The data come from the RNA Mapping Database (RMDB), library OK2TRN. Chemical mapping of a 177-nucleotide RNA with 2A3 and DMS. For 2A3, 3,784 sequencing reads were counted. Reactivities are given for positions 27 through 126. Conditions: 150 mM KOAc, 10 mM MgCl2 and 150 mM bicine (pH 8.5), 24 C. For 2A3 the reverse transcriptase was SuperScript II with manganese.

RNA sequence: GGGAACGACUCGAGUAGAGUCGAAAAUAACGAAGCUGGCGAUGAUGACAAUAUCGCCGACACUGGCGCAGUGGGCCGCCGCACCGUUAACAGAAAUAAUUCUCGAACCGCGUUCUGCCGCGAUGGCACACGUUCGUUAAUUCGUUAACGAACGUGUAAAAGAAACAACAACAACAAC
Reactivity to 2A3 in 0.01 (KOAc 150mM, MgCl2 10mM, bicine 150mM(pH8.5), 24C), signal-to-noise 3, nucleotides 027 to 126: u080a000a040c020g010a050a030g060c080u090g030g020c020g010a020u070g040a060u160g080a090c060a130a050u070a020u190c000g000c030c000g020a000c010a020c030u130g030g000c050g000c040a050g070u150g030g040g000c030c000g000c010c000g000c000a040c030c030g020u020u030a060a010c030a040g150a050a100a010u240a040a080u130u000c000u020c040g040a090a050c050c020g020c040g030u050u040c020u080g050c030c030g020c100g120a140u300g040g000c040
Reactivity to DMS in 0.01 (KOAc 150mM, MgCl2 10mM, bicine 150mM(pH8.5), 24C), signal-to-noise 4, nucleotides 027 to 126: u020a060a050c080g000a130a130g010c060u000g030g000c020g000a040u000g020a070u000g000a130c300a110a080u010a040u010c000g010c000c010g020a060c050a080c140u000g010g030c040g030c060a110g030u010g000g000g000c110c010g010c010c020g030c060a070c070c020g020u010u000a030a100c150a080g000a050a080a080u010a080a140u010u000c020u000c010g010a080a090c110c070g010c040g010u000u000c050u000g010c030c010g010c150g000a060u020g010g010c060